Chemical mapping of a 177-nucleotide RNA with 2A3 and DMS. Source: RMDB library OK1LIB, as collected in RNAgym. High DMS reactivity at an A or C suggests that its Watson-Crick edge is free. Reactivities are given for positions 27 through 126. For DMS, 3,044 sequencing reads were counted.

[RMDB]
RNA sequence: GGGAACGACUCGAGUAGAGUCGAAAAGAAAAGCGCGAAAGUCCGAAAGCGCGAAAGGACGAAAGACUGGAAGAUGGAAACUACGAAACAUCGAAAGUAGGAAACAGUCGAAAGAAGAAAGAAAGAAGGGAUUACAUUAGUUCGCUAAUGUAAUCCCAAAAGAAACAACAACAACAAC
Reactivity to 2A3 in 0.01 (KOAc 150mM, MgCl2 10mM, bicine 150mM(pH8.5), 24C), signal-to-noise 2, nucleotides 027 to 126: g110a000a100a000a000g000c020g020c010g000a220a000a000g040u040c030c030g050a050a100a070g040c040g090c040g010a050a030a000g060g000a000c040g040a090a170a000g000a010c000u000g000g160a000a160g040a080u180g000g030a090a010a000c000u070a040c020g140a270a000a000c020a050u050c000g030a190a120a000g140u070a000g060g130a120a000a000c000a000g000u000c000g050a000a090a000g040a010a000g050a110a050a000g160a040a000a000g010a050a210
Reactivity to DMS in 0.01 (KOAc 150mM, MgCl2 10mM, bicine 150mM(pH8.5), 24C), signal-to-noise 3, nucleotides 027 to 126: g000a150a040a000a090g020c000g000c000g000a120a120a210g030u000c080c000g010a080a080a180g000c000g020c000g000a090a070a170g000g000a050c020g060a120a130a140g000a040c000u010g020g010a110a020g000a060u040g000g050a100a060a120c080u000a010c100g000a050a070a080c110a040u010c130g000a140a100a100g000u040a070g000g010a110a080a170c000a010g000u000c010g000a060a020a090g020a120a130g050a090a020a080g020a050a030a050g020a130a140